[RMDB]
RNA sequence: GGGAACGACUCGAGUAGAGUCGAAAACAUAUGAUCUGACACAUGCGUACGUACACAGUCUAGACUAGACGCUAGCUGGAUCGCUAGUCUCUAGAUGAUCGACAGACAUACGCUGAUCCACUAGGUACUACGAAACAGGAUUCGUCCUGUUUCGUAGAAAAGAAACAACAACAACAAC
Reactivity to DMS in 0.01 (KOAc 150mM, MgCl2 10mM, bicine 150mM(pH8.5), 24C), signal-to-noise 8, nucleotides 027 to 126: c080a130u010a080u000g010a080u000c040u000g010a130c160a110c130a080u000g010c010g020u000a010c070g010u000a060c100a140c210a120g000u000c000u000a140g010a120c050u000a010g010a030c250g010c000u000a000g010c040u010g020g010a060u010c120g000c000u000a030g000u000c280u000c010u000a050g010a100u010g000a120u000c120g010a030c140a080g000a050c030a050u000a020c030g000c010u010g010a050u010c020c070a090c160u000a060g020g010u010a140
Reactivity to 2A3 in 0.01 (KOAc 150mM, MgCl2 10mM, bicine 150mM(pH8.5), 24C), signal-to-noise 6, nucleotides 027 to 126: c020a020u200a110u260g070a070u040c040u090g100a020c020a000c010a200u160g000c020g030u020a020c020g020u070a090c110a010c020a090g010u000c010u030a050g050a150c020u020a010g010a020c030g010c030u000a010g000c020u080g100g110a110u110c040g000c010u010a010g010u010c000u000c000u040a070g000a130u100g070a110u240c070g010a010c010a020g020a010c000a020u050a000c040g000c030u050g000a020u000c010c000a040c060u050a030g040g090u080a060